RNA sequence: GGGAACGACUCGAGUAGAGUCGAAAAACUCCGCUGAUCAUACGUGAUCAGCGGAGAUACGCGAUGCCGAAUUCGGGUCGCGCAAUGAUUUACUUGCUGAUACUCAGGAGUUUAUGACCAUGACUAACCGCAAUGCUCUCUUCGGAGAGCAUUGCGGAAAAGAAACAACAACAACAAC
Reactivity to 2A3 in 0.01 (KOAc 150mM, MgCl2 10mM, bicine 150mM(pH8.5), 24C), signal-to-noise 1, nucleotides 027 to 126: a000c000u000c000c000g000c000u000g080a000u000c000a020u100a000c180g100u100g000a000u000c000a000g000c020g000g020a000g000a000u000a000c000g000c000g050a050u300g300c020c000g050a060a300u300u300c070g000g000g000u000c000g000c000g010c000a000a150u100g160a100u070u010u010a020c080u000u120g300c000u050g000a000u080a160c120u000c000a000g070g000a100g070u000u020u020a050u100g120a100c070c060a060u180g000a020c050u040a020a020